[RMDB]
RNA sequence: GGGAACGACUCGAGUAGAGUCGAAAAUGAUCGAGAGAUCUAACGAUGUACGCGAGUCAAGUGCACAGACUCGAGCGAAAGCUCGGUCGAAAGACCGCGUACAUCGGUCGGCAAGUGGACAGUCAAACCCUGCAUUUAUCUUCGGAUAAAUGCAGGGAAAAGAAACAACAACAACAAC
Reactivity to DMS in 0.01 (KOAc 150mM, MgCl2 10mM, bicine 150mM(pH8.5), 24C), signal-to-noise 3, nucleotides 027 to 126: u000g010a010u000c010g010a300g010a260g000a000u000c010u010a080a150c000g000a010u000g000u000a000c010g010c000g040a030g000u000c000a100a130g000u000g010c120a050c100a250g010a010c000u000c020g010a010g000c000g010a150a070a180g000c010u000c000g020g000u000c010g000a060a070a180g000a000c000c000g010c000g000u000a000c020a000u000c000g020g020u000c050g000g010c010a030a080g010u020g010g000a060c090a090g000u000c070a100a120a150
Reactivity to 2A3 in 0.01 (KOAc 150mM, MgCl2 10mM, bicine 150mM(pH8.5), 24C), signal-to-noise 1, nucleotides 027 to 126: u090g010a020u010c010g000a010g000a010g000a140u000c000u040a060a030c000g010a000u010g010u020a010c000g070c030g030a060g040u000c020a080a080g170u160g140c130a030c030a110g000a010c040u070c200g030a010g000c000g070a140a000a000g000c000u000c000g010g000u000c000g000a030a010a000g000a000c010c000g010c000g000u000a000c000a000u000c000g010g020u040c020g000g010c030a160a030g060u040g070g080a010c020a020g000u050c060a060a040a090
Source information:
The record gives the reactivity of an RNA of 177 nucleotides to DMS and 2A3. For 2A3, 1,796 sequencing reads were counted. For DMS, 2,317 sequencing reads were counted. High DMS reactivity at an A or C suggests that its Watson-Crick edge is free. For DMS the reverse transcriptase was MarathonRT.